[RMDB]
The record gives the reactivity of an RNA of 177 nucleotides to 2A3 and DMS. The data come from the RNA Mapping Database (RMDB), library M2PK90. Conditions: 150 mM KOAc, 10 mM MgCl2 and 150 mM bicine (pH 8.5), 24 C. The 2A3 profile rests on 39,699 reads.
RNA sequence: GGGAACGACUCGAGUAGAGUCGAAAAGUUAUGGAAAACGUCUUAGCUACCAGUACAACAACAAUGCUGGACGGUGAUGGUUCGACUUACUCGAAACCAUCACGUAGUGGUAGUCGUUCCCAUUCAACUACUUAUACACGUUCGCGUGUAUAAGUAGAAAAGAAACAACAACAACAAC
Reactivity to 2A3 in 0.01 (KOAc 150mM, MgCl2 10mM, bicine 150mM(pH8.5), 24C), signal-to-noise 9, nucleotides 027 to 126: g030u060u050a090u270g170g050a090a090a030a050c020g030u020c040u160u210a040g000c010u040a060c020c040a040g050u110a050c100a210a010c010a040a010c020a100a200u120g000c010u010g020g060a120c080g030g030u030g020a040u070g010g070u010u010c000g010a010c020u040u070a030c000u020c010g010a100a030a020c010c000a010u040c020a010c100g070u150a070g010u020g040g020u030a010g000u000c000g000u000u000c000c010c000a000u010u020c000a010a010
Reactivity to DMS in 0.01 (KOAc 150mM, MgCl2 10mM, bicine 150mM(pH8.5), 24C), signal-to-noise 7, nucleotides 027 to 126: g010u010u010a090u000g010g000a100a060a090a140c040g010u000c010u010u020a110g010c020u000a110c100c080a080g010u010a070c130a090a090c150a070a060c120a060a130u000g010c010u000g000g000a050c040g010g000u000g000a030u000g010g010u010u010c000g000a020c100u000u010a040c140u010c010g010a060a090a040c030c000a000u000c030a030c090g010u000a040g010u010g010g010u000a190g010u000c000g020u000u000c000c000c010a060u000u010c090a080a150